[RMDB]
RNA sequence: GGGAACGACUCGAGUAGAGUCGAAAAGGCUGAUGCUAGCAAAAGCGCACAAGUUUAAGCGAAAUAUACGUAUGGUAAAUUCACAAUUAGGGUGGUACUCAUACGCCAUCUAUAAGUCUAAAGUUUACCCGUCCCAUUACUUCGGUAAUGGGACGGGAAAAGAAACAACAACAACAAC
Reactivity to 2A3 in 0.01 (KOAc 150mM, MgCl2 10mM, bicine 150mM(pH8.5), 24C), signal-to-noise 1, nucleotides 027 to 126: g020g000c000u000g000a060u100g000c100u000a220g110c040a020a020a020a020g200c160g000c000a000c120a140a000g100u140u080u190a000a000g100c020g040a000a180a080u120a080u000a000c000g000u000a010u000g000g000u120a000a000a300u300u140c030a000c040a120a180u280u220a220g010g000g010u000g000g000u000a000c000u000c140a080u000a000c000g030c010c000a160u090c180u000a200u000a100a000g000u000c200u220a000a000a300g020u000u000u040a040
Source: RMDB library OK1LIB, as collected in RNAgym. This 177-nucleotide RNA was probed chemically with 2A3. The reactions ran in a buffer of 150 mM KOAc, 10 mM MgCl2 and 150 mM bicine (pH 8.5), at 24 C. Values cover nucleotides 27 to 126. 2A3 adducts were read by reverse transcription with SuperScript II with manganese.